[RMDB]
RNA sequence: GGGAACGACUCGAGUAGAGUCGAAAAUUCAUCAAUUGCCUGAUCUCAAAGUGUUAGAGACUUAGAGGCAGCCACAAAGCUUGAUAUCAUCAGGUCUGAGCCAUUUCUAGAGAAGAGGAAACCAAGAUUCUCCCUCUUAGACCUUACUCCCUGAUUACAUUUAGUGAGGAUUCGUCCUCACUAAAUGAAAAGAAACAACAACAACAAC
Reactivity to 2A3 in 0.01 (KOAc 150mM, MgCl2 10mM, bicine 150mM(pH8.5), 24C), signal-to-noise 3, nucleotides 027 to 156: u070u030c010a070u000c010a030a230u070u060g000c000c000u070g060a180u040c020u000c060a110a100a030g060u050g090u240u120a070g040a020g020a110c030u080u100a040g000a020g130g020c000a010g020c060c000a060c060a080a090a010g060c050u070u040g080a050u070a050u200c100a040u040c040a020g000g080u010c060u070g010a000g050c060c000a080u040u120u020c030u050a030g020a020g010a200a030g030a020g020g050a040a060a030c090c090a110a130g040a120u110u040c060u050c060c010c000u010c010u050u000a020g010a020c000c000u000u040a060c020u000c010c000c000u010g030a070u040u120a050
Reactivity to DMS in 0.01 (KOAc 150mM, MgCl2 10mM, bicine 150mM(pH8.5), 24C), signal-to-noise 2, nucleotides 027 to 156: u000u010c040a110u000c040a070a130u000u010g000c010c010u020g000a130u000c030u010c000a120a150a160g010u010g010u000u000a180g010a160g020a060c020u000u000a110g010a040g030g050c020a080g000c060c070a140c050a090a110a160g000c050u000u030g000a090u000a110u000c100a120u000c020a050g010g020u010c070u000g010a070g060c040c050a110u000u010u000c030u000a120g000a090g010a060a120g010a080g000g000a060a060a210c100c090a060a100g000a240u010u000c030u000c010c020c000u000c010u010u000a070g010a020c100c000u000u000a040c030u000c020c010c020u000g000a110u000u000a200